[RMDB]
RNA sequence: GGGAACGACUCGAGUAGAGUCGAAAAGAUCAGAGUAGAAAACGAUGCGUUAAGUGUCCAGCAGACGGGGAGUUGCUGCCGGAACGAAAAGCAAAGCUUGCGGUAUCGUUUUCGCAUCCCGCUGAAAGCAUAUCAUUGGAUUCGUCCAAUGAUAUGCAAAAGAAACAACAACAACAAC
Reactivity to 2A3 in 0.01 (KOAc 150mM, MgCl2 10mM, bicine 150mM(pH8.5), 24C), signal-to-noise 5, nucleotides 027 to 126: g120a020u070c020a000g010a010g050u070a010g010a010a000a000a000c000g000a010u010g010c010g000u030u090a020a000g010u010g020u020c010c000a010g000c000a000g010a030c010g010g020g010g020a050g050u190u240g060c000u000g000c000c010g000g000a010a020c020g010a020a020a000a000g030c140a170a100a040g020c010u000u000g000c000g020g010u010a000u000c000g000u000u000u000u000c000g000c000a040u020c010c000c000g000c010u010g020a070a070a020
Reactivity to DMS in 0.01 (KOAc 150mM, MgCl2 10mM, bicine 150mM(pH8.5), 24C), signal-to-noise 5, nucleotides 027 to 126: g000a150u010c030a020g000a070g010u000a140g000a010a010a010a010c010g000a010u000g000c010g010u000u030a020a050g020u010g010u000c000c000a030g000c000a020g010a030c050g010g000g000g010a120g010u020u010g010c010u000g000c000c050g010g000a030a050c110g010a030a020a010a030g010c030a100a130a160g010c030u010u000g000c010g000g010u010a010u000c010g000u000u000u000u000c010g010c080a130u000c000c000c010g010c010u000g000a050a100a140
An RNA of 177 nucleotides, treated with 2A3 and DMS and read out base by base.
Values cover nucleotides 27 to 126.
The reactions ran in a buffer of 150 mM KOAc, 10 mM MgCl2 and 150 mM bicine (pH 8.5), at 24 C.